RNA sequence: GGGAACGACUCGAGUAGAGUCGAAAAGACCAGCGGUUCCUUGAAAUUGGCCUGUUGCAUCGGAUCGAAGUAGCCGCCCGGGUUGCCCGCCAUCCAGGUAUAGGUACGGGUCGAGCUGAGCCAUUGCGAAAGGAUAGCCUUUCGAGGCUAUCCUUUCAAAAGAAACAACAACAACAAC
Reactivity to DMS in 0.01 (KOAc 150mM, MgCl2 10mM, bicine 150mM(pH8.5), 24C), signal-to-noise 2, nucleotides 027 to 126: g000a150c050c000a070g000c120g000g000u040u000c020c020u000u000g020a110a060a150u050u010g000g000c070c050u020g020u030u000g000c080a080u010c050g030g020a060u020c030g000a110a130g000u020a060g000c050c040g000c060c070c070g000g000g030u040u020g000c030c020c010g000c050c030a040u060c010c090a030g000g000u020a030u020a140g000g040u000a070c000g020g000g020u010c050g000a170g000c010u020g000a100g020c040c020a060u030u020g030c300
Reactivity to 2A3 in 0.01 (KOAc 150mM, MgCl2 10mM, bicine 150mM(pH8.5), 24C), signal-to-noise 2, nucleotides 027 to 126: g040a050c000c000a000g000c000g060g010u000u050c010c000u040u000g180a090a080a040u160u040g040g000c030c010u020g070u040u100g030c030a070u080c070g000g070a040u040c050g030a060a070g010u040a010g020c030c010g020c010c000c000g060g000g000u040u060g050c020c000c000g000c040c010a020u100c020c020a050g010g000u070a130u070a160g090g010u050a050c020g020g000g000u000c010g010a000g010c050u070g030a000g020c020c010a060u030u090g030c020